[RMDB]
RNA sequence: GGGAACGACUCGAGUAGAGUCGAAAAGGAGGAACAAGCAUGGUUCCAGCGAGCUCUUUAUGAAAGAAAAGAAAAUCUAGAUUCGGUGAGAGGUGAAGAGGUAGGAGGUCUGGUGGCAUGAAUCUCUUCAAAAUGUGUCUGUGGAUCUCCACAGCUAGAUCGAUAUCAGUUUCGACUGAUAUCGAUCAAAAGAAACAACAACAACAAC
Reactivity to DMS in 0.01 (KOAc 150mM, MgCl2 10mM, bicine 150mM(pH8.5), 24C), signal-to-noise 1, nucleotides 027 to 156: g050g000a090g000g010a060a030c060a110a260g000c090a110u010g020g000u000u000c070c050a140g030c040g010a190g000c040u000c000u000u000u030a090u030g010a140a110a080g010a120a090a030a170g000a080a090a040a130u010c050u010a140g000a130u000u000c020g020g010u010g010a140g030a110g040g070u010g020a130a060g000a050g000g040u000a080g010g010a110g020g000u010c050u000g020g000u000g020g020c000a090u000g000a100a070u000c020u000c000u000u030c080a030a060a080a090u010g010u000g000u000c000u000g000u010g030g000a130u000c180u000c060c020a000c000a000g000c070u000a110
Reactivity to 2A3 in 0.01 (KOAc 150mM, MgCl2 10mM, bicine 150mM(pH8.5), 24C), signal-to-noise 3, nucleotides 027 to 156: g020g040a020g000g010a080a000c060a090a050g080c040a040u110g030g000u020u040c050c020a000g070c040g040a030g010c020u010c060u110u190u120a110u150g090a120a100a070g070a040a100a020a030g130a020a190a030a010u090c060u100a080g010a140u050u080c070g000g020u050g010a040g000a010g000g090u060g010a050a040g020a000g060g000u090a040g000g040a020g000g000u020c020u020g050g000u040g010g000c010a010u030g030a020a010u040c030u020c000u190u120c040a010a050a150a130u130g070u020g060u050c000u010g050u030g020g050a100u050c080u010c040c000a010c000a000g000c010u040a040

Structure probing data (DMS and 2A3) for a 207-nucleotide construct.
The RNA was probed in 150 mM KOAc, 10 mM MgCl2 and 150 mM bicine (pH 8.5) at 24 C.